The record gives the reactivity of an RNA of 177 nucleotides to 2A3 and DMS. It was measured as part of the RMDB libraries RFM100 and RFMREP. The reactions ran in a buffer of 150 mM KOAc, 10 mM MgCl2 and 150 mM bicine (pH 8.5), at 24 C.
RNA sequence: GGGAACGACUCGAGUAGAGUCGAAAACAUUGUCUCCAACCGCGGUCGCAAGUCGUGACCUGGAGCCCGAAGAGCGAGGUCUCCGCCUAAGGCGUUGAGCGCCAAGGGUUUCGAGUCACUGGCUGCGAGAAGAGCAGAAGUUCGCUUCUGCUCUUCUAAAAGAAACAACAACAACAAC
Reactivity to 2A3 in 0.01 (KOAc 150mM, MgCl2 10mM, bicine 150mM(pH8.5), 24C), signal-to-noise 6, nucleotides 027 to 126: c050a080u150u230g050u040c030u000c050c010a040a090c070c020g050c050g070g050u040c010g000c060a090a080g040u040c010g020u030g000a000c000c000u020g010g000a010g010c010c010c000g050a200a080g050a010g030c020g000a020g030g150u050c020u000c010c000g010c010c010u210a180a110g020g000c000g020u040u140g020a040g040c020g000c010c010a020a040g000g000g000u000u020u000c020g000a030g010u000c010a020c050u080g000g020c000u010g010c000g000
Reactivity to DMS in 0.01 (KOAc 150mM, MgCl2 10mM, bicine 150mM(pH8.5), 24C), signal-to-noise 2, nucleotides 027 to 126: c090a150u010u010g010u020c020u010c010c080a080a160c130c040g020c080g020g020u010c010g010c020a060a040g060u000c110g000u000g000a020c000c000u000g020g000a030g000c000c010c000g000a200a060g010a200g000c010g030a120g000g000u020c000u000c020c000g000c000c020u040a100a140g040g020c000g000u030u040g010a010g010c000g000c000c020a120a300g000g000g010u020u000u000c000g000a110g010u030c000a000c020u010g050g000c000u000g000c030g000